Chemical mapping of a 177-nucleotide RNA with DMS and 2A3.
For DMS the reverse transcriptase was MarathonRT.

[RMDB]
RNA sequence: GGGAACGACUCGAGUAGAGUCGAAAAAGGCAUCGUUCCUGCAUCCAAUGUCGAAGCAAUGGCGCAAUCCUAGGCAUCGGCAGUGUAGAAGCAAUGGCGUAGACCUCAGGCAUCGAGCAUGUGUAUCGAUCACUAAUACGUUCGCGUAUUAGUGAUCAAAAGAAACAACAACAACAAC
Reactivity to DMS in 0.01 (KOAc 150mM, MgCl2 10mM, bicine 150mM(pH8.5), 24C), signal-to-noise 5, nucleotides 027 to 126: a080g010g020c040a090u000c040g010u000u000c030c000u000g010c050a080u010c060c070a080a070u000g020u000c030g020a050a070g030c040a090a100u010g000g010c040g000c200a070a090u000c020c010u000a170g000g010c020a050u000c030g010g000c020a030g000u010g020u010a100g020a050a070g000c060a070a030u000g000g010c040g000u010a080g000a070c060c020u000c090a070g010g000c050a030u010c060g000a050g010c070a050u000g010u010g000u000a080u010c130
Reactivity to 2A3 in 0.01 (KOAc 150mM, MgCl2 10mM, bicine 150mM(pH8.5), 24C), signal-to-noise 4, nucleotides 027 to 126: a010g060g020c030a050u040c020g020u010u020c010c000u010g030c010a050u050c030c020a060a080u070g020u050c030g020a030a000g010c040a070a150u140g020g000c050g000c080a020a070u050c020c000u070a070g160g000c010a020u010c030g020g000c010a020g010u020g010u070a060g000a100a010g000c020a030a070u090g070g000c020g010u030a050g010a150c010c000u030c030a040g060g000c010a040u020c050g040a010g050c070a080u090g060u030g030u110a090u160c060
Source: RMDB library VIROID, as collected in RNAgym.